[RMDB]
RNA sequence: GGGAACGACUCGAGUAGAGUCGAAAAACUGACGGUACGCCGUCAGAACGGUAGAAAAGAUGGUUUGAAAACCACGCCUUCUACCAAUAUAGUAAAUAAAUAGGCGGAGCGGUCAUACGUAACCGCAAAAACAUCCUUGGCUUCGGCCAAGGAUGAACAGGGUGAAAAAGUUCGCUUUUUCACCCUGAAAAGAAACAACAACAACAAC
Reactivity to 2A3 in 0.01 (KOAc 150mM, MgCl2 10mM, bicine 150mM(pH8.5), 24C), signal-to-noise 2, nucleotides 027 to 156: a000c000u000g000a000c000g000g000u010a010c170g060c060c000g000u000c000a000g010a020a010c040g040g010u000a000g020a030a020a030a010g070a240u000g000g100u010u100u150g150a200a180a000a020c000c000a000c000g010c000c010u000u000c000u000a000c000c000a000a010u130a010u040a000g070u050a030a050a130u090a060a080a030u100a030g010g010c020g010g000a000g000c010g000g000u020c010a110u060a270c040g050u030a040a030c010c000g000c000a000a100a000a000a000c000a000u020c010c000u000u000g000g000c010u000u020c140g020g000c010c000a000a000g000g000a000u000g010a000a010